RNA sequence: GGGAACGACUCGAGUAGAGUCGAAAAUCGACUAGCCGUAGUGGCGAAGACCGACCUGGUAGGGUGCCGCAGAGACCCACUAUUAGGCUAGUAUAAAAAUCUCUGCGGAAUAUAGACAGAACAUUACAUACCGCUCCUAUUUCGAUAGGAGCGGUAUAAAAGAAACAACAACAACAAC
Reactivity to DMS in 0.01 (KOAc 150mM, MgCl2 10mM, bicine 150mM(pH8.5), 24C), signal-to-noise 2, nucleotides 027 to 126: u050c010g000a060c000u010a010g010c000c000g020u010a010g030u000g000g040c300g000a110a010g000a170c150c200g010a010c000c020u000g010g010u040a060g010g090g060u000g030c000c000g010c020a020g010a010g000a060c300c000c020a000c080u010a000u000u020a120g030g000c050u000a020g000u020a000u000a000a000a000a030a090u000c000u000c000u000g030c000g000g000a040a000u020a080u050a060g000a170c200a130g000a150a050c100a070u010u020a070c170
Reactivity to 2A3 in 0.01 (KOAc 150mM, MgCl2 10mM, bicine 150mM(pH8.5), 24C), signal-to-noise 1, nucleotides 027 to 126: u150c000g040a000c000u030a000g000c000c000g050u020a000g030u000g030g060c020g060a050a040g090a080c000c020g050a040c000c000u190g100g000u030a030g040g080g010u080g050c000c000g000c000a000g000a000g000a000c000c000c010a000c000u070a040u100u140a080g000g000c000u000a000g000u000a000u090a030a000a000a000a000u000c000u000c000u000g000c000g000g050a080a060u110a000u000a040g130a020c000a040g250a140a130c110a300u140u040a020c150